[RMDB]
RNA sequence: GGGAACGACUCGAGUAGAGUCGAAAACCAAACGGGGAAGUGGAUGGACAACAGGUUAAUAUUCCUGUACUACCUUAUACUGCGAUGGAGGGACGGAGAAGUGAAAGCAACACGUACGGACAGAAGUUCUGGAGAAUACGUUCGCGUAUUCUCCAGAAAAAGAAACAACAACAACAAC
Reactivity to DMS in 0.01 (KOAc 150mM, MgCl2 10mM, bicine 150mM(pH8.5), 24C), signal-to-noise 2, nucleotides 027 to 126: c020c030a070a050a120c100g040g030g000g000a070a030g050u000g000g000a050u000g040g000a120c200a180a010c030a020g000g020u000u020a060a110u000a160u030u000c010c010u000g000u000a100c170u000a070c080c040u000u030a040u020a050c070u000g030c090g000a090u040g010g000a050g000g040g010a050c050g010g000a040g030a050a070g020u050g000a040a080a060g000c080a070a120c150a080c100g040u020a040c130g000g000a050c020a130g010a120a040g010u000
Reactivity to 2A3 in 0.01 (KOAc 150mM, MgCl2 10mM, bicine 150mM(pH8.5), 24C), signal-to-noise 2, nucleotides 027 to 126: c020c000a020a000a060c000g050g010g010g070a000a040g010u090g010g020a070u120g010g040a130c060a090a000c000a060g000g000u130u110a190a060u170a040u130u160c030c000u020g020u040a030c010u020a010c040c000u040u070a060u000a090c060u090g000c000g090a040u030g000g000a120g000g000g040a000c050g080g000a090g010a000a080g080u140g130a050a090a000g060c000a020a020c080a000c010g050u130a060c010g060g050a000c000a070g080a100a000g040u020